[RMDB]
RNA sequence: GGGAACGACUCGAGUAGAGUCGAAAAGGGGUCUCCGUUUGACGGCAAAGACAUGCGUAUGUACUGAAGCCUCCACGGUAUGCAUACGCAACAGCUUUGCCCGAGGAGACGGAGGCACCCAAAUCUUCCCGCAGUACUUCGGUACUGCGGGAAGAAAGCCUUAUCUACCCUUCGGGGUAGAUAAGGCAAAAGAAACAACAACAACAAC
Reactivity to 2A3 in 0.01 (KOAc 150mM, MgCl2 10mM, bicine 150mM(pH8.5), 24C), signal-to-noise 1, nucleotides 027 to 156: g000g000g000g010u040c040u030c010c010g000u040u050u090g090a020c010g000g000c000a000a000a000g050a060c080a060u110g000c000g010u000a000u000g020u010a000c120u160g300a280a040g040c010c010u140c210c170a140c210g000g040u080a090u140g090c000a000u000a000c010g030c020a010a010c100a040g020c000u000u000u000g000c040c000c040g010a010g060g160a080g000a010c010g000g000a060g020g000c050a300c010c010c010a020a210a000u020c000u000u000c000c000c000g030c000a000g000u030a000c120u180u280c280g070g040u000a000c000u000g000c000g000g000g010a000a000g000a000a000a000
An RNA of 207 nucleotides, treated with 2A3 and read out base by base. 2A3 adducts were read by reverse transcription with SuperScript II with manganese. The RNA was probed in 150 mM KOAc, 10 mM MgCl2 and 150 mM bicine (pH 8.5) at 24 C.